Chemical mapping of a 207-nucleotide RNA with DMS and 2A3. Conditions: 150 mM KOAc, 10 mM MgCl2 and 150 mM bicine (pH 8.5), 24 C. For 2A3, 5,368 sequencing reads were counted. The data come from the RNA Mapping Database (RMDB), library OK3TST. DMS adducts were read by reverse transcription with MarathonRT.

RNA sequence: GGGAACGACUCGAGUAGAGUCGAAAACUUCAUAUAGUCGUUCAGCAGGUUCAUCGACAGCGUCAUCACGAACAGCAACAACCCGACGGCGAACAGCGACUGAUAUUCGAUGGUGCCGACCGCGGAGGUUCCGCGGGCCAUCGAGACCAUGUACGCCCACACUCCUUAAAUUCGUUUAAGGAGUGUGAAAAGAAACAACAACAACAAC
Reactivity to DMS in 0.01 (KOAc 150mM, MgCl2 10mM, bicine 150mM(pH8.5), 24C), signal-to-noise 2, nucleotides 027 to 156: c010u000u010c050a090u010a150u010a050g020u000c040g020u020u000c040a090g010c020a120g050g020u000u010c050a090u000c000g000a140c060a070g020c060g020u010c040a070u000c050a070c090g020a080a080c050a070g000c080a090a140c080a050a050c000c010c030g010a060c100g020g000c050g010a070a080c040a090g010c010g030a060c020u000g000a030u000a080u000u000c010g020a040u000g000g020u000g020c220c070g000a180c000c010g010c010g040g010a120g010g020u000u000c000c010g020c000g030g010g000c020c020a000u000c000g000a040g000a030c010c010a070u010g010u000a080c050g010c000c080
Reactivity to 2A3 in 0.01 (KOAc 150mM, MgCl2 10mM, bicine 150mM(pH8.5), 24C), signal-to-noise 7, nucleotides 027 to 156: c010u080u090c080a080u110a040u080a200g040u020c020g030u050u080c060a050g010c030a040g090g060u070u060c050a080u070c130g080a070c030a070g030c020g050u040c010a120u050c020a030c100g040a070a020c070a040g020c020a010a040c010a050a070c080c010c020g030a040c020g030g010c020g010a080a030c020a030g040c020g040a020c060u040g040a050u050a180u220u020c000g000a000u000g020g010u050g110c110c100g120a050c010c000g020c010g020g030a100g140g150u280u080c000c000g000c000g000g000g000c010c000a000u000c000g010a010g000a000c020c000a020u100g020u070a060c020g050c040c020